[RMDB]
RNA sequence: GGGAACGACUCGAGUAGAGUCGAAAAGUACUACUUCUACGCCACACCGCUGGCCCCGUUCCUGGUGCUGGGGAUCGUGCUGGUGCUCGGCGAGGUGCUGGGCAGGUCGGACGCGAGUGCCGAACGGCGCAAGACCGGUCUGCUGGUGCUCGCGCUCAGUACGGAUUGUUUUCGAACAAUCCGUACUAAAAGAAACAACAACAACAAC
Reactivity to 2A3 in 0.01 (KOAc 150mM, MgCl2 10mM, bicine 150mM(pH8.5), 24C), signal-to-noise 1, nucleotides 027 to 156: g020u040a130c060u000a030c010u110u020c020u140a080c030g010c000c000a030c000a010c070c030g070c110u020g010g030c000c010c000c000g090u130u070c030c040u180g100g000u090g040c090u080g020g040g000g040a090u090c110g060u120g090c100u110g030g000u030g070c080u030c050g050g000c000g000a020g000g030u030g010c000u100g020g040g000c010a010g000g010u000c040g010g000a120c070g020c000g000a030g000u020g000c000c000g000a060a020c110g020g020c000g000c040a100a060g080a090c000c010g040g000u020c030u010g030c020u030g020g000u000g040c000u050c030g030c000g040c000u020c050